[RMDB]
The record gives the reactivity of an RNA of 207 nucleotides to 2A3 and DMS. The RNA was probed in 150 mM KOAc, 10 mM MgCl2 and 150 mM bicine (pH 8.5) at 24 C.
RNA sequence: GGGAACGACUCGAGUAGAGUCGAAAAGACAAUCCAGGGAACCGGAUGUCAUCACGUUGUUGCAGUACCAGAUGGCAUCUUAAAUCCGAUCUGCAAAUAAGCAUGUAGAAAGCUGAUCUGGGCUUUAAAAACGUGGUGCUGUUCGCAGCACCACGAACUAGUAAAAUGACUUCGGUCAUUUUACUAGAAAAGAAACAACAACAACAAC
Reactivity to 2A3 in 0.01 (KOAc 150mM, MgCl2 10mM, bicine 150mM(pH8.5), 24C), signal-to-noise 2, nucleotides 027 to 156: g030a010c010a000a180u040c010c020a070g110g170g000a100a110c160c070g000g010a010u000g010u030c000a050u100c020a030c160g040u040u010g020u040u040g050c010a020g040u090a190c010c000a030g000a000u000g000g040c030a060u010c000u040u020a030a100a010u100c040c020g040a070u020c010u030g020c000a030a070a180u220a230a120g030c020a040u080g020u040a020g070a090a070a020g000c040u070g050a040u000c010u020g000g010g010c000u190u180u170a030a130a020a020a020c010g010u010g000g000u010g070c000u000g010u020u050c160g000c040a000g000c010a000c020c000a020c010g000a000a000
Reactivity to DMS in 0.01 (KOAc 150mM, MgCl2 10mM, bicine 150mM(pH8.5), 24C), signal-to-noise 1, nucleotides 027 to 156: g030a170c070a050a080u000c040c000a080g020g000g020a190a130c030c020g000g040a050u020g030u000c020a040u010c020a250c130g000u000u000g020u000u020g000c000a090g040u020a040c080c040a140g000a010u010g000g020c010a020u000c010u010u010a040a190a100u010c020c000g000a110u000c080u000g000c010a110a060a130u000a080a190g020c080a110u010g010u010a080g010a040a020a210g010c000u000g010a030u030c030u000g020g000g000c040u000u000u000a020a010a120a090a140c010g020u010g000g020u010g010c050u010g020u010u000c210g040c000a000g020c000a070c020c000a020c000g020a040a010